[RMDB]
RNA sequence: GGGAACGACUCGAGUAGAGUCGAAAAUAUUACGGAUAGAAAUAUCUUCUCCAACUAAUCGUUGUAAUAUUUCGGUCAUUCGUUGUAAGGGAACGAUUCUUUGUACUUCUUUAAUUAAUUCGCCAUAGAUGCCCUGUAAAUUCGUUUACAGGGCAUCAAAAGAAACAACAACAACAAC
Reactivity to DMS in 0.01 (KOAc 150mM, MgCl2 10mM, bicine 150mM(pH8.5), 24C), signal-to-noise 1, nucleotides 027 to 126: u010a050u010u010a060c070g000g000a030u000a030g000a110a110a070u010a010u000c050u000u010c040u010c110c060a050a040c090u000a100a080u010c140g010u000u000g000u010a060a040u000a030u000u000u000c020g000g000u000c170a090u000u000c040g000u000u000g020u010a040a130g000g000g010a050a060c040g020a070u000u000c120u000u000u000g000u010a080c090u000u000c040u000u000u000a080a100u000u010a030a190u000u000c040g000c030c040a140u000a150